[RMDB]
RNA sequence: GGGAACGACUCGAGUAGAGUCGAAAAAAGAAAAAUCGAGUAGGGCCCUGGGGAGAGUACACGCGCAAGCGAGAAAUUUAAAGGAAAUUGACGGAAGAACACCACAAGGAGUGGAGUGUGCGGCUUAGCACAUUGUCACAUUCGUGUGACAAUGUGCAAAAGAAACAACAACAACAAC
Reactivity to 2A3 in 0.01 (KOAc 150mM, MgCl2 10mM, bicine 150mM(pH8.5), 24C), signal-to-noise 2, nucleotides 027 to 126: a000a000g100a000a070a020a000a000u140c070g010a040g000u060a050g030g000g000c000c000c000u020g010g010g030g030a100g000a030g020u000a000c030a030c030g020c030g000c000a080a030g000c030g040a030g290a030a060a040u110u110u150a130a120a000g100g000a040a090a040u020u020g000a000c010g000g000a040a040g000a120a030c030a080c000c050a050c050a170a090g230g010a040g160u070g010g000a000g030u000g020u000g000c050g000g000c010u000u140a030
Reactivity to DMS in 0.01 (KOAc 150mM, MgCl2 10mM, bicine 150mM(pH8.5), 24C), signal-to-noise 3, nucleotides 027 to 126: a060a060g000a040a030a050a120a020u040c020g010a060g010u040a130g030g000g000c050c020c020u020g000g000g000g000a120g010a110g050u020a060c130a070c050g060c030g010c200a060a100g000c050g010a070g020a050a000a070u030u000u000a020a050a110g010g000a030a080a030u010u020g050a070c040g030g000a010a060g000a090a100c140a080c020c020a030c030a130a110g000g000a110g020u000g030g000a080g000u000g020u010g000c090g030g000c060u000u010a170

Notes: Chemical mapping of a 177-nucleotide RNA with 2A3 and DMS. For DMS the reverse transcriptase was MarathonRT. The RNA was probed in 150 mM KOAc, 10 mM MgCl2 and 150 mM bicine (pH 8.5) at 24 C.